[RMDB]
RNA sequence: GGGAACGACUCGAGUAGAGUCGAAAAGAUAUGGAGUCGCUUUGAUCAAGAACUACGAGUCACUGUCGGAAACGACAGAAGUCUCGCUUGGGAGCGACUCCUAAGUCAAAGGUUGCUUCGGCAACCACUUUUUAAACAUGUUCGCAUGUUUAAAAAGAAAAGAAACAACAACAACAAC
Reactivity to DMS in 0.01 (KOAc 150mM, MgCl2 10mM, bicine 150mM(pH8.5), 24C), signal-to-noise 6, nucleotides 027 to 126: g010a040u010a300u010g000g000a010g030u000c000g020c010u000u010u000g010a160u010c020a050a040g020a150a100c170u010a300c030g020a010g010u000c030a300c000u000g000u000c000g000g000a100a090a230c010g000a010c010a010g010a060a090g020u000c000u010c010g000c020u000u000g000g000g000a010g010c010g000a010c010u000c000c000u000a010a060g000u000c040a100a150a100g010g010u000u010g010c000u000u010c220g010g010c010a010a010c000c010a050
Reactivity to 2A3 in 0.01 (KOAc 150mM, MgCl2 10mM, bicine 150mM(pH8.5), 24C), signal-to-noise 6, nucleotides 027 to 126: g030a010u080a060u190g000g000a020g000u010c010g040c050u180u190u160g160a230u300c040a030a030g040a130a150c200u250a080c300g010a000g010u020c020a010c100u000g010u000c010g000g030a070a050a060c010g000a010c000a000g020a080a020g020u000c000u000c010g030c040u020u030g020g000g030a000g000c000g000a000c000u000c000c000u010a010a010g000u000c030a060a100a080g010g000u010u000g000c010u070u160c300g160g000c000a000a000c000c000a020